[RMDB]
RNA sequence: GGGAACGACUCGAGUAGAGUCGAAAAGAUAUGGAAUUAUUAAUGUUGUCCCAUGUAGGGAGGAUAGACUCGGAAACGAGUCAUAUCCUUUGAUCUACGAUGGGACAACAUUAAUAAUUCCUAAGUCCAUUUGAGAUAAGUUCGCUUAUCUCAAAUGAAAAGAAACAACAACAACAAC
Reactivity to DMS in 0.01 (KOAc 150mM, MgCl2 10mM, bicine 150mM(pH8.5), 24C), signal-to-noise 4, nucleotides 027 to 126: g010a090u010a300u010g000g000a020a000u000u010a000u000u000a010a010u000g010u000u000g000u000c000c000c000a020u000g000u000a010g010g010g010a000g020g010a010u000a010g010a010c000u000c000g010g000a130a160a290c010g010a030g010u000c000a060u000a010u000c000c000u000u010u010g010a060u010c000u000a000c010g010a010u000g010g000g010a010c000a000a000c000a000u000u000a000a010u000a000a010u000u010c000c000u000a020a090g000u000c050
The record gives the reactivity of an RNA of 177 nucleotides to DMS. It was measured as part of the RMDB library TTRINS. Conditions: 150 mM KOAc, 10 mM MgCl2 and 150 mM bicine (pH 8.5), 24 C.